An RNA of 177 nucleotides, treated with 2A3 and DMS and read out base by base.
For DMS, 3,080 sequencing reads were counted.
Reactivities are given for positions 27 through 126.
The reactions ran in a buffer of 150 mM KOAc, 10 mM MgCl2 and 150 mM bicine (pH 8.5), at 24 C.
The 2A3 profile rests on 865 reads.
Source: RMDB library OK2TRN, as collected in RNAgym.
RNA sequence: GGGAACGACUCGAGUAGAGUCGAAAAGUGACCAGAUAUACGAAUAAACUCUUUGUUCCAUGCUCUGGGUUUAUGGGGUUCUCUAUCUGGAGAUGGAUUGUGAUGGAAGGAAACCUCUGAGUUGCACCGAAGUUCAUUAGUUCGCUAAUGAACUUCGAAAAGAAACAACAACAACAAC
Reactivity to 2A3 in 0.01 (KOAc 150mM, MgCl2 10mM, bicine 150mM(pH8.5), 24C), signal-to-noise 1, nucleotides 027 to 126: g010u050g050a050c010c010a000g020a020u140a020u050a080c030g100a080a040u130a120a040a030c030u020c030u040u000u070g100u130u140c130c020a030u040g010c000u020c010u030g030g000g000u010u090u000a090u160g080g000g030g060u150u070c020u000c010u020a130u080c060u060g080g010a070g030a010u080g020g050a030u110u120g080u000g040a060u120g070g020a020a060g000g010a050a020a060c030c010u000c050u050g080a220g060u030u060g080c060a030c050
Reactivity to DMS in 0.01 (KOAc 150mM, MgCl2 10mM, bicine 150mM(pH8.5), 24C), signal-to-noise 3, nucleotides 027 to 126: g040u000g010a160c020c020a040g000a060u000a060u010a120c210g010a110a050u010a030a070a120c040u000c040u010u000u000g000u010u010c100c150a060u010g000c040u000c030u010g010g010g000u000u000u000a020u000g010g020g010g010u010u000c050u010c040u000a040u000c030u000g000g000a150g010a100u010g000g010a090u010u010g010u000g000a140u010g010g020a090a130g010g000a060a110a090c080c070u000c030u000g000a100g020u000u000g010c090a120c170